This 177-nucleotide RNA was probed chemically with DMS and 2A3.
The DMS profile rests on 1,449 reads.
For 2A3 the reverse transcriptase was SuperScript II with manganese.
[RMDB]
RNA sequence: GGGAACGACUCGAGUAGAGUCGAAAAUGCCUUUAUUCAACAUAUGGUACAUUACCUAGACGAUGAAGGUACCAUGGCAGUUGUACUCCCACAUGGUGUCUUAUUCCGUGGUGCCGCAGAAGGCGUCUCUGCUACGCCCAUUCGUGGGCGUAGCAGAAAAAGAAACAACAACAACAAC
Reactivity to DMS in 0.01 (KOAc 150mM, MgCl2 10mM, bicine 150mM(pH8.5), 24C), signal-to-noise 2, nucleotides 027 to 126: u010g010c160c000u010u000u010a000u000u050c090a190a300c040a160u070a090u000g000g000u010a070c300a270u020u020a000c040c000u000a150g010a230c300g000a000u010g000a090a090g000g070u000a020c010c000a030u000g000g000c290a040g000u000u030g010u000a010c140u000c040c000c080a220c140a070u000g000g000u000g040u000c040u000u050a120u000u000c010c000g030u000g000g000u000g000c000c040g000c070a030g040a000a020g000g040c000g020u020c060
Reactivity to 2A3 in 0.01 (KOAc 150mM, MgCl2 10mM, bicine 150mM(pH8.5), 24C), signal-to-noise 1, nucleotides 027 to 126: u060g020c010c010u040u050u030a130u060u140c040a010a040c000a040u120a130u090g000g000u040a040c030a210u000u260a060c000c000u060a020g010a050c000g000a030u000g140a010a060g000g010u000a000c000c000a010u000g060g000c020a060g030u160u000g070u180a040c060u150c040c010c000a120c110a070u300g040g010u000g000u000c030u060u100a030u150u020c010c000g010u000g010g000u000g020c000c000g000c010a100g060a260a010g050g000c010g010u000c000
The data come from the RNA Mapping Database (RMDB), library OK1LIB. Reactivities are given for positions 27 through 126. DMS adducts were read by reverse transcription with MarathonRT.